[RMDB]
RNA sequence: GGGAACGACUCGAGUAGAGUCGAAAACCACUGUUCGCAGUGGGAGGAAGAUAUGGACCCGAUAAGUGUUUGAGCGUUGAAAUUUCGUCGGAAACGACGAAAUGGAGCUCUUACACUUUUGACGGGUCCUAAGUCAGCUGUAUCGUUUCGACGAUAAGUACACCCAUCAAUUCGUUGAUGGGUGUACAAAAGAAACAACAACAACAAC
Reactivity to 2A3 in 0.01 (KOAc 150mM, MgCl2 10mM, bicine 150mM(pH8.5), 24C), signal-to-noise 2, nucleotides 027 to 156: c000c000a000c030u020g010u060u120c300g000c140a000g010u030g070g010g010a070g090g080a110a160g010a060u070a050u190g010g000a010c010c000c010g010a040u010a070a000g010u000g000u010u020u010g010a010g000c030g120u220u070g020a000a020a000u000u000u000c000g000u000c020g000g050a080a060a050c020g010a000c030g000a010a000a000u010g000g000a000g000c000u010c000u000u000a000c000a010c000u020u030u000u030g070a050c000g000g000g010u020c000c000u000a000a010g020u010c020a010g000c050u110g060u150a090u120c050g010u000u130u100c100g110a100c010g070a080u140a240a000
Reactivity to DMS in 0.01 (KOAc 150mM, MgCl2 10mM, bicine 150mM(pH8.5), 24C), signal-to-noise 1, nucleotides 027 to 156: c010c000a060c010u000g130u000u000c300g060c000a070g010u000g000g000g000a090g000g010a110a090g030a080u000a200u000g020g030a050c000c020c010g050a120u000a060a010g030u000g020u000u000u000g000a010g040c010g000u000u000g020a210a120a090u000u000u000c000g020u000c000g020g010a110a080a230c010g000a000c020g010a010a000a010u010g000g010a300g000c000u000c000u000u020a010c010a000c010u020u000u000u010g000a180c020g000g000g000u010c000c000u000a000a100g010u010c030a110g000c020u000g020u020a100u000c000g010u000u000u000c090g000a110c030g020a030u000a030a220
An RNA of 207 nucleotides, treated with 2A3 and DMS and read out base by base. Source: RMDB library RNAMAK, as collected in RNAgym. The 2A3 profile rests on 2,930 reads. For DMS, 2,269 sequencing reads were counted.